Chemical mapping of a 177-nucleotide RNA with 2A3 and DMS.
2A3 adducts were read by reverse transcription with SuperScript II with manganese.
It was measured as part of the RMDB library OK2TRN.
For DMS, 3,817 sequencing reads were counted.
[RMDB]
RNA sequence: GGGAACGACUCGAGUAGAGUCGAAAAAGUGAGUGGGCCCUGUGGACCCCAGUCCUGGCAGGAGAGGUAUGCUCAGUGGGUUUGGAGUCAGGAGCCAUCACGGGAGGCCUGGAAGCAAAGACUCUCCGUACAAAAGGACUUUCGAGUCCUUUUGUACAAAAGAAACAACAACAACAAC
Reactivity to 2A3 in 0.01 (KOAc 150mM, MgCl2 10mM, bicine 150mM(pH8.5), 24C), signal-to-noise 2, nucleotides 027 to 126: a000g130u090g020a140g120u090g010g000g000c010c040c040u110g140u140g110g080a050c040c030c000c020a010g050u050c010c020u000g060g000c040a050g030g090a060g010a010g070g050u130a040u140g000c010u000c100a100g080u170g070g050g000u040u120u160g030g010a050g030u000c000a000g040g020a020g030c020c010a020u100c030a000c000g010g050g000a040g000g040c010c030u010g060g010a060a010g000c040a110a040a050g030a070c000u000c000u010c010c030
Reactivity to DMS in 0.01 (KOAc 150mM, MgCl2 10mM, bicine 150mM(pH8.5), 24C), signal-to-noise 3, nucleotides 027 to 126: a110g020u010g000a080g030u000g010g010g010c020c010c040u010g020u000g010g010a060c040c010c020c030a100g000u000c020c010u010g030g030c080a160g000g000a040g010a060g000g000u000a120u000g000c020u000c040a110g010u010g000g000g010u010u010u010g010g010a080g010u000c030a070g010g000a100g000c050c030a090u000c050a060c070g010g010g010a090g000g000c040c030u010g010g000a110a050g020c060a060a040a140g000a060c040u000c010u010c040c170